[RMDB]
RNA sequence: GGGAACGACUCGAGUAGAGUCGAAAAACGGAUUUCGAUCCGUGUCUAGAUAUGGAGCGUCAGACACGCUUUGAUCUAUACUCAGUACUCGGAAACGAGGAACCGUAUAGGGAGCGUGUAUGACGCUCCUAAGUCCUUGCAACCGAUUCGUCGGUAAAAUUUGAUACCUCUUCGGAGGUAUCAAAUUAAAAGAAACAACAACAACAAC
Reactivity to DMS in 0.01 (KOAc 150mM, MgCl2 10mM, bicine 150mM(pH8.5), 24C), signal-to-noise 2, nucleotides 027 to 156: a050c000g010g030a040u000u010u000c180g000a060u000c000c000g000u010g010u010c070u000a160g030a160u000a200u010g010g010a000g040c020g020u000c010a100g000a040c000a020c010g010c000u000u000u000g020a050u000c010u000a000u010a050c010u000c030a150g000u000a180c000u000c010g000g010a140a110a300c000g010a060g010g000a140a070c220c300g020u010a070u010a040g010g000g010a020g000c010g090u000g000u000a010u000g010a020c010g000c010u010c000c000u000a010a040g010u000c010c030u000u000g000c070a100a170c000c010g010a090u000u010c180g060u010c000g040g000u000a030a050